[RMDB]
RNA sequence: GGGAACGACUCGAGUAGAGUCGAAAAAUAGUGUUAUUCGUAACACUAUAUAUCCGAACUCAAGGAUUCGUUCCACAGACAUGCAUGCUAGCAUGAAAGCAACUGAACAAGCGUUCGCGCUUGUUAAAGUCAUCUAGCACUUCGGUGCUAGAUGACUAAAAGAAACAACAACAACAAC
Reactivity to DMS in 0.01 (KOAc 150mM, MgCl2 10mM, bicine 150mM(pH8.5), 24C), signal-to-noise 1, nucleotides 027 to 126: a010u000a000g000u000g010u000u010a010u010u010c220g020u010a000a010c000a000c000u000a000u000a020u000a090u000c130c040g010a110a050c000u010c010a030a230g010g000a000u010u000c000g040u010u000c000c010a220c070a100g000a120c020a000u000g010c000a060u000g040c180u010a120g020c030a030u000g000a070a170a100g030c080a040a070c090u000g010a010a000c000a000a010g060c000g010u000u000c300g040c000g000c000u000u000g010u000u000a030a080
Reactivity to 2A3 in 0.01 (KOAc 150mM, MgCl2 10mM, bicine 150mM(pH8.5), 24C), signal-to-noise 1, nucleotides 027 to 126: a000u000a000g000u000g010u000u000a010u010u060c240g030u030a000a000c000a000c000u000a000u010a000u010a000u010c040c030g020a190a040c000u010c040a050a050g160g000a030u000u000c000g000u000u000c020c000a040c000a010g060a010c010a000u000g050c000a020u050g060c030u120a050g020c010a000u030g060a060a020a010g080c050a010a130c040u160g030a060a000c050a000a010g000c010g040u020u100c210g000c000g020c030u010u000g000u010u020a040a040